An RNA of 177 nucleotides, treated with DMS and 2A3 and read out base by base.
Source: RMDB library 15KREP, as collected in RNAgym.
For DMS the reverse transcriptase was MarathonRT.
The reactions ran in a buffer of 150 mM KOAc, 10 mM MgCl2 and 150 mM bicine (pH 8.5), at 24 C.
RNA sequence: GGGAACGACUCGAGUAGAGUCGAAAAGUUACAAGUAGGAGAUUCAGUUCUCUUGCAAGGCCAUUCUCUAGCUAAGAAUAUCCUGCAUGUCGUAGGCCCAGAUGCCCGCGCUAAACAGGAUGUUUCUGUAAAUGAUUAAGUUCGCUUAAUCAUUUACAAAAGAAACAACAACAACAAC
Reactivity to DMS in 0.01 (KOAc 150mM, MgCl2 10mM, bicine 150mM(pH8.5), 24C), signal-to-noise 4, nucleotides 027 to 126: g020u010u020a080c090a100a300g020u000a010g020g010a030g010a040u000u010c300a140g000u000u000c000u000c010u010u000g000c030a080a170g000g010c070c080a110u000u000c000u000c010u000a060g020c120u000a120a060g010a010a040u000a010u000c010c010u000g010c070a300u000g000u000c020g070u000a040g000g010c020c060c220a120g000a150u010g010c000c000c010g040c020g000c010u010a030a150a100c010a010g010g000a020u000g000u010u010u000c030u000
Reactivity to 2A3 in 0.01 (KOAc 150mM, MgCl2 10mM, bicine 150mM(pH8.5), 24C), signal-to-noise 4, nucleotides 027 to 126: g030u050u090a080c040a110a030g000u010a010g050g020a010g010a020u060u100c050a070g300u090u000c010u000c000u000u010g000c000a040a060g030g000c030c000a020u080u000c020u000c020u060a050g050c040u110a110a040g040a070a070u060a020u070c000c010u000g000c020a040u060g090u170c000g010u000a010g000g000c020c020c040a060g040a070u130g000c010c010c000g030c000g020c010u060a090a060a000c010a000g010g000a020u010g010u000u020u000c020u020